Source information
The record gives the reactivity of an RNA of 207 nucleotides to 2A3 and DMS. Reactivities are given for positions 27 through 156.
RNA sequence: GGGAACGACUCGAGUAGAGUCGAAAACCUCCGCUUGAGGAUCGAAGCGUUAAAUUGAAUCAAGCUAGUUUAUCUAUCGCGUGUCUGUCCGCAGUGGGUAAAUGAAAUUAAAGACGAGACUAAACGUGUAGUACUGAAGGUAGAGUAAUUUCGGACGGGAAGACAAAUGGUUCGCCAUUUGUCUUCCAAAAGAAACAACAACAACAAC
Reactivity to 2A3 in 0.01 (KOAc 150mM, MgCl2 10mM, bicine 150mM(pH8.5), 24C), signal-to-noise 2, nucleotides 027 to 156: c000c000u040c040c020g000c000u000u010g010a020g030g030a050u020c090g090a110a040g090c010g060u080u190a070a120a100u130u130g040a010a030u010c010a040a000g000c000u030a030g000u030u020u050a010u000c020u020a030u300c030g020c010g000u010g000u040c040u020g040u020c010c010g000c060a090g000u000g020g000g020u010a000a040a040u030g020a010a000a050u170u210a070a030a010g040a010c140g060a010g020a010c030u090a020a090a160c070g040u090g070u080a040g090u090a070c050u060g060a130a040g070g010u100a010g020a010g100u080a090a160u040u070u060c000g000g020a000c000g060
Reactivity to DMS in 0.01 (KOAc 150mM, MgCl2 10mM, bicine 150mM(pH8.5), 24C), signal-to-noise 1, nucleotides 027 to 156: c050c010u020c030c110g020c020u040u020g000a070g000g020a170u000c070g030a190a240g030c090g000u020u000a020a050a180u020u000g010a160a140u000c060a020a080g000c030u000a190g010u000u000u000a020u040c020u000a110u020c050g020c020g000u010g000u000c080u000g000u000c040c020g000c030a130g040u010g010g010g000u000a030a020a040u000g000a040a070a150u000u030a010a070a150g020a100c010g010a180g030a060c020u020a010a050a030c060g010u000g000u000a050g020u000a070c070u010g060a140a080g040g040u010a070g020a080g010u000a110a300u020u000u000c000g010g020a270c180g000
The 2A3 profile rests on 990 reads. The reactions ran in a buffer of 150 mM KOAc, 10 mM MgCl2 and 150 mM bicine (pH 8.5), at 24 C.